This 207-nucleotide RNA was probed chemically with DMS and 2A3.
Conditions: 150 mM KOAc, 10 mM MgCl2 and 150 mM bicine (pH 8.5), 24 C.
For DMS, 6,127 sequencing reads were counted.
For DMS the reverse transcriptase was MarathonRT.
RNA sequence: GGGAACGACUCGAGUAGAGUCGAAAAAAUAAAUUACAAGGAAUGUAAGUGUCAGUGGAAUGAAUGUAUGUGGAAGCCAUAGACUUCAGAAAGUUAGGAUCUUUAAGACACUGUAGGCAGUAUCCUCAUAAGGGCAUAUGCAUGCAUGUGCACACACCAUACUGCGAAGUUUCGACUUCGCAGUAUGAAAAGAAACAACAACAACAAC
Reactivity to DMS in 0.01 (KOAc 150mM, MgCl2 10mM, bicine 150mM(pH8.5), 24C), signal-to-noise 3, nucleotides 027 to 156: a080a090u010a030a050a160u000u000a040c040a050a080g000g000a110a080u000g020u000a060a070g020u000g010u000c040a100g020u000g020g000a090a050u000g010a090a030u000g030u000a040u010g030u000g040g020a110a080g030c010c040a090u000a110g010a060c040u010u000c040a160g010a070a030a120g020u000u000a080g030g020a090u010c020u000u000u010a150a150g010a070c030a020c000u010g030u000a100g020g030c010a090g010u000a070u000c020c020u010c110a070u000a080a170g010g000g010c040a070u010a060u000g000c000a020u000g010c050a010u000g010u000g030c040a050c060a090c060a040c110
Reactivity to 2A3 in 0.01 (KOAc 150mM, MgCl2 10mM, bicine 150mM(pH8.5), 24C), signal-to-noise 4, nucleotides 027 to 156: a000a000u220a020a040a010u120u070a050c050a070a020g040g010a100a040u080g030u120a050a090g030u020g030u080c050a040g020u030g020g050a090a050u070g040a090a010u080g050u090a040u080g040u050g040g030a060a010g010c010c010a030u070a040g030a040c020u060u050c060a050g080a110a070a000g020u060u070a030g020g020a070u060c040u040u090u050a090a010g030a020c030a010c080u020g010u020a030g070g000c000a010g040u050a040u080c010c020u030c030a060u060a200a080g000g010g030c030a020u040a020u100g010c000a010u050g000c010a020u130g060u050g030c010a010c010a000c000a020c110